An RNA of 177 nucleotides, treated with DMS and read out base by base.
[RMDB]
RNA sequence: GGGAACGACUCGAGUAGAGUCGAAAAAAUUCAACGGCGCUGUGUGAAGAGAUUGUUAUGGAAAAGUUGGACUAUGCGGCGUUUCGUGUCUACUACCAAAAUUAUUUCGAUAAGGAGAAUCUUCAAAAUAAAUGGUCAUAUUCGUAUGACCAUUUAUAAAAGAAACAACAACAACAAC
Reactivity to DMS in 0.01 (KOAc 150mM, MgCl2 10mM, bicine 150mM(pH8.5), 24C), signal-to-noise 3, nucleotides 027 to 126: a100a100u010u000c050a080a050c060g010g010c060g010c030u020g020u000g020u010g000a100a080g010a100g020a130u000u000g010u010u010a090u000g000g010a080a040a090a130g000u000u010g010g010a110c060u020a090u010g010c030g020g020c020g020u000u000u010c020g010u000g000u000c010u010a070c080u010a140c040c030a020a050a060a080u000u000a080u000u010u010c060g010a080u010a050a080g010g010a090g010a080a060u000c040u000u000c040a040a040a080
Notes
Reactivities are given for positions 27 through 126. Source: RMDB library OK2TST, as collected in RNAgym. For DMS the reverse transcriptase was MarathonRT.